[RMDB]
RNA sequence: GGGAACGACUCGAGUAGAGUCGAAAAAUGUUGACGUUUGGGCUUCUGAUCGUUGCAAUGCUGUCAUUUCACAACCACAAAAAAUAAUCCACCCUUGAGUUAGUGGCUCAGGUGGAUUAUUCGUCCAGUCCUCUCAGAAAUUCGUUUCUGAGAGGACAAAAGAAACAACAACAACAAC
Reactivity to DMS in 0.01 (KOAc 150mM, MgCl2 10mM, bicine 150mM(pH8.5), 24C), signal-to-noise 2, nucleotides 027 to 126: a010u000g020u000u000g000a040c130g000u000u000u000g010g010g040c030u000u000c040u000g040a070u000c040g020u010u000g000c020a040a070u010g000c080u010g020u030c030a130u000u010u000c060a140c080a100a130c040c030a070c180a010a030a070a030a010a010u000a000a000u000c000c000a000c020c010c100u070u030g000a000g010u000u040a100g030u030g000g030c010u000c000a090g000g000u000g000g010a000u000u000a000u000u000c090g020u000c080c120a130
Reactivity to 2A3 in 0.01 (KOAc 150mM, MgCl2 10mM, bicine 150mM(pH8.5), 24C), signal-to-noise 2, nucleotides 027 to 126: a000u150g010u010u030g010a060c080g000u000u010u080g050g020g000c000u020u000c030u060g060a040u080c070g060u060u020g000c020a030a040u060g020c040u060g050u040c030a080u010u100u090c080a100c080a080a090c040c040a040c120a010a050a060a040a000a010u010a000a000u030c000c010a020c050c050c000u050u060g000a000g010u030u090a090g080u170g300g000c000u020c020a000g000g000u000g000g000a000u000u000a000u000u000c000g010u000c070c020a020